Chemical mapping of a 177-nucleotide RNA with 2A3 and DMS.
For DMS, 4,221 sequencing reads were counted.
The data come from the RNA Mapping Database (RMDB), library TTRDES.
High 2A3 reactivity points to a flexible backbone, as in loops and unpaired stretches.
Reactivities are given for positions 27 through 126.
For DMS the reverse transcriptase was MarathonRT.
Reactivities are rounded to 0.1 and cut off at 0 and 3.

[RMDB]
RNA sequence: GGGAACGACUCGAGUAGAGUCGAAAAGAUAUGGAAUAAGCGAGCGAUAAGAAGGUAUCGGAAACGAUACCCUUCUUUUGACGCUCGACUUAUUCCUAAGUCAAAGCGCAGUGUUCGCACUGCGCAACAAUUGAUGCCAGUUCGCUGGCAUCAAUUGAAAAGAAACAACAACAACAAC
Reactivity to 2A3 in 0.01 (KOAc 150mM, MgCl2 10mM, bicine 150mM(pH8.5), 24C), signal-to-noise 2, nucleotides 027 to 126: g000a000u050a020u100g020g000a010a010u010a010a000g030c020g000a010g000c060g130a150u040a300a020g000a000a010g000g000u000a000u010c000g000g050a050a040a020c010g010a010u010a000c000c000c020u020u000c000u020u060u020u180g210a130c140g000c000u010c010g000a000c000u000u010a000u010u000c000c000u000a000a010g010u020c020a080a120a080g000c000g000c000a000g000u000g070u150u270c300g080c090a000c010u000g000c000g030c000a000a000
Reactivity to DMS in 0.01 (KOAc 150mM, MgCl2 10mM, bicine 150mM(pH8.5), 24C), signal-to-noise 3, nucleotides 027 to 126: g000a030u000a300u010g010g000a010a000u000a010a000g010c020g020a010g010c000g030a150u020a000a020g010a030a050g000g000u010a000u000c000g010g010a070a040a140c000g010a020u000a000c140c090c050u010u000c000u000u010u010u010g000a250c130g020c000u010c000g010a060c000u010u000a010u000u010c000c000u010a020a060g000u000c030a150a120a160g010c010g010c000a010g020u000g000u000u010c260g010c000a010c000u000g000c000g010c010a040a030